An RNA of 177 nucleotides, treated with 2A3 and DMS and read out base by base. The RNA was probed in 150 mM KOAc, 10 mM MgCl2 and 150 mM bicine (pH 8.5) at 24 C. DMS adducts were read by reverse transcription with MarathonRT. For DMS, 1,532 sequencing reads were counted.
[RMDB]
RNA sequence: GGGAACGACUCGAGUAGAGUCGAAAAGAAGAGAAUAAGCGCGGAUAUAUCUGUCGGUAGAGCGGCAGGACCGACACCUGCGAGUAUAGGGAUCAAGACCCUGUUCGCGCAAAGAUUGAAGUAGAAGCAUCAGGAUCGGUUUCGACCGAUCCUGAUGAAAAGAAACAACAACAACAAC
Reactivity to 2A3 in 0.01 (KOAc 150mM, MgCl2 10mM, bicine 150mM(pH8.5), 24C), signal-to-noise 2, nucleotides 027 to 126: g130a050a000g110a010g020a060a060u200a220a030g010c000g010c020g030g000a000u010a000u010a030u180c020u040g040u030c000g000g000u080a080g010a010g140c040g000g000c020a050g030g010a050c030c020g030a030c040a050c000c000u070g030c010g000a010g000u070a040u110a070g010g000g010a060u120c120a140a040g030a120c000c000c000u010g000u000u020c020g000c010g000c000a000a110a000g090a080u080u100g060a060a000g030u150a070g030a140a000g030
Reactivity to DMS in 0.01 (KOAc 150mM, MgCl2 10mM, bicine 150mM(pH8.5), 24C), signal-to-noise 2, nucleotides 027 to 126: g000a090a030g000a060g000a170a030u000a030a100g000c090g010c000g030g000a060u000a020u080a110u000c060u050g000u000c050g000g000u000a060g030a060g020c070g000g040c030a070g020g000a020c030c030g000a120c070a090c040c050u000g030c070g010a020g000u110a040u000a010g000g000g000a170u000c300a070a030g000a090c000c000c000u000g000u000u020c030g030c020g000c030a060a100a110g070a210u010u040g000a200a300g020u000a070g010a110a020g000